Record summary:
Chemical mapping of a 177-nucleotide RNA with 2A3. 2A3 adducts were read by reverse transcription with SuperScript II with manganese. Reactivities are given for positions 27 through 126. For 2A3, 1,001 sequencing reads were counted.
RNA sequence: GGGAACGACUCGAGUAGAGUCGAAAACGUCGUCAUGCCGAAAUACUUGCUGCCAAGCCGAUUUCCAGCUUGAUGGCGGUCAAGCACACGAUGGUCGAACCCAACCGUGCCCAGAUCGCGGCGGCCAGCCCACGUGCCUGUUCGCAGGCACGUGGGCAAAAGAAACAACAACAACAAC
Reactivity to 2A3 in 0.01 (KOAc 150mM, MgCl2 10mM, bicine 150mM(pH8.5), 24C), signal-to-noise 2, nucleotides 027 to 126: c040g000u000c000g090u080c020a010u020g030c030c000g030a030a050a000u140a090c060u100u260g000c000u000g080c020c050a000a000g050c010c060g000a030u070u030u010c070c090a000g000c010u010u050g040a050u060g000g030c090g000g000u040c060a020a020g010c000a040c000a000c150g060a050u070g080g000u060c040g070a170a120c020c000c000a050a000c030c020g010u030g010c010c030c030a070g000a020u140c080g000c010g110g000c030g000g000c000c000a030